[RMDB]
RNA sequence: GGGAACGACUCGAGUAGAGUCGAAAAGAGGAGGCACCACGUGCUCUAUCCGUGCGGAAUCGACAUCAAGAGAUUUCGGAAGCAUAAUUUUUGGCGACCGGGGCAGCCGGUGAUCACGUUACCUGGCAUCGUAAGCGUAUUUCGAUACGCUUACGAUAAAAGAAACAACAACAACAAC
Reactivity to 2A3 in 0.01 (KOAc 150mM, MgCl2 10mM, bicine 150mM(pH8.5), 24C), signal-to-noise 6, nucleotides 027 to 126: g100a010g060g020a010g010g030c010a020c050c040a060c080g020u040g010c010u000c010u050a080u030c030c010g050u080g050c030g000g050a020a040u050c030g050a060c060a100u110c050a080a070g050a020g010a100u000u050u050c020g000g010a020a000g010c030a050u080a150a220u190u120u090u080u130g060g000c020g000a040c020c010g000g010g060g060c030a020g020c010c000g010g000u030g030a030u070c030a010c100g010u030u020a040c020c000u010g050g000c020
Reactivity to DMS in 0.01 (KOAc 150mM, MgCl2 10mM, bicine 150mM(pH8.5), 24C), signal-to-noise 4, nucleotides 027 to 126: g010a060g010g010a080g000g000c020a070c060c050a100c110g010u000g010c030u000c010u000a040u020c010c050g010u010g020c050g000g000a060a070u010c020g010a130c170a130u030c160a120a070g000a270g000a040u010u000u010c030g020g020a090a140g000c060a060u020a060a050u000u000u010u010u010g000g010c040g020a110c060c030g020g010g010g000c110a070g000c030c040g010g000u000g000a070u020c050a050c090g000u000u000a100c050c000u000g000g010c240
Overview
The data come from the RNA Mapping Database (RMDB), libraries RFM100 and RFMREP. This 177-nucleotide RNA was probed chemically with 2A3 and DMS. DMS adducts were read by reverse transcription with MarathonRT. Values cover nucleotides 27 to 126.